[RMDB]
Chemical mapping of a 177-nucleotide RNA with 2A3 and DMS.
DMS adducts were read by reverse transcription with MarathonRT.
The RNA was probed in 150 mM KOAc, 10 mM MgCl2 and 150 mM bicine (pH 8.5) at 24 C.
Source: RMDB library OK1LIB, as collected in RNAgym.
RNA sequence: GGGAACGACUCGAGUAGAGUCGAAAACAUGAAUGCUCGGCAUCUUUUACCACGGGUAGGUCGGGUAGCAAGCGUGUAAAGCAUGCUCAGCUUUUUGGGGUAAAGGGAAGAGAGCUGGGCGUACUGACUGGGUCUCUUCAUUCGUGAAGAGAUCCAGAAAAGAAACAACAACAACAAC
Reactivity to 2A3 in 0.01 (KOAc 150mM, MgCl2 10mM, bicine 150mM(pH8.5), 24C), signal-to-noise 8, nucleotides 027 to 126: c030a030u080g100a120a050u100g000c000u010c010g010g000c000a110u020c040u020u090u030u060a030c010c020a050c050g020g010g000u070a040g020g040u100c010g000g000g000u010a010g020c030a040a010g040c030g000u030g030u070a060a040a010g080c010a000u040g000c000u010c020a010g000c000u030u040u020u040u070g040g000g000g020u070a090a060a030g050g010g020a030a010g020a010g000a010g010c000u000g000g000g000c010g000u020a020c010u030g060a020
Reactivity to DMS in 0.01 (KOAc 150mM, MgCl2 10mM, bicine 150mM(pH8.5), 24C), signal-to-noise 7, nucleotides 027 to 126: c090a060u020g010a120a030u010g000c010u010c030g010g000c020a110u020c030u000u000u030u020a070c050c050a100c150g010g000g000u020a050g010g010u030c060g000g000g010u000a040g020c120a150a070g000c250g000u000g000u010a050a080a080g010c060a060u010g000c000u000c030a050g000c000u000u000u000u000u020g010g010g010g000u020a050a080a070g000g000g000a080a080g010a050g000a040g010c000u000g010g000g020c010g030u020a040c050u010g000a270